[RMDB]
RNA sequence: GGGAACGACUCGAGUAGAGUCGAAAAUGGCAGGAUUGCUUUACCGCUUUCCGUCUGGCAAACAUUUAACUGUUAACUAUGAACUGGUACGGACAAGGGGAAUCUGACUGUCUAAUUAAAACAUAGCAAAAUUGGGUACAUUCGUGUACCCAAUUUUAAAAGAAACAACAACAACAAC
Reactivity to 2A3 in 0.01 (KOAc 150mM, MgCl2 10mM, bicine 150mM(pH8.5), 24C), signal-to-noise 3, nucleotides 027 to 126: u080g010g020c000a010g050g070a280u020u040g020c000u080u050u090a270c020c000g090c100u020u000u020c000c020g000u000c000u000g000g000c070a140a000a000c000a010u150u190u100a130a080c140u060g090u130u120a090a010c050u030a060u210g060a060a070c040u010g010g010u140a020c020g000g020a060c140a040a000g030g020g010g000a030a050u010c020u010g040a050c010u010g000u000c030u030a030a030u010u160a000a010a030a010c110a100u160a070g140c120
Reactivity to DMS in 0.01 (KOAc 150mM, MgCl2 10mM, bicine 150mM(pH8.5), 24C), signal-to-noise 5, nucleotides 027 to 126: u010g000g010c010a020g000g000a110u000u000g000c150u010u010u010a140c010c010g000c020u000u000u000c010c000g000u000c000u000g000g010c100a100a110a070c020a010u000u010u040a090a120c200u030g010u010u010a100a080c180u020a120u010g030a140a140c030u010g010g020u040a020c010g000g000a020c260a000a030g010g000g000g010a070a030u010c010u010g000a240c020u000g010u010c010u010a050a110u010u000a070a050a070a100c080a100u020a080g000c240